[RMDB]
RNA sequence: GGGAACGACUCGAGUAGAGUCGAAAAAGAAUUCCGGUUUGCCGGUUUUCCCGGCGUCCAGUUUUGGGUAUGAGAGCGCAUCCCGAAAAGUGUGAAACGGUUUUCGGAUAAGAUGCGCGUCAAAAAACAUCAGAGAAAUGUUCGCAUUUCUCUGAUGAAAAGAAACAACAACAACAAC
Reactivity to 2A3 in 0.01 (KOAc 150mM, MgCl2 10mM, bicine 150mM(pH8.5), 24C), signal-to-noise 3, nucleotides 027 to 126: a000g110a050a060u180u000c020c000g000g020u130u100u190g140c000c020g000g000u030u010u110u130c010c000c000g000g080c020g040u020c000c020a050g030u050u120u210u180g090g020g010u170a110u220g100a070g020a030g070c000g000c000a000u010c010c010c010g000a000a020a010a030g270u040g020u040g100a120a140a100c030g050g000u000u000u000u010c000g000g000a020u010a140a080g000a000u020g000c030g000c000g000u000c000a030a040a010a000a000a000
Reactivity to DMS in 0.01 (KOAc 150mM, MgCl2 10mM, bicine 150mM(pH8.5), 24C), signal-to-noise 5, nucleotides 027 to 126: a110g010a130a160u020u020c000c010g000g010u020u040u040g020c020c000g000g000u010u000u020u000c180c010c000g020g010c160g010u010c080c040a100g020u010u010u020u000g010g000g010u010a070u010g000a110g000a180g000c000g010c000a010u000c000c000c000g000a000a010a010a030g000u000g020u020g030a150a130a160c120g010g010u000u000u000u000c000g000g010a140u020a090a170g000a010u000g010c000g030c010g000u010c010a000a030a050a090a060a120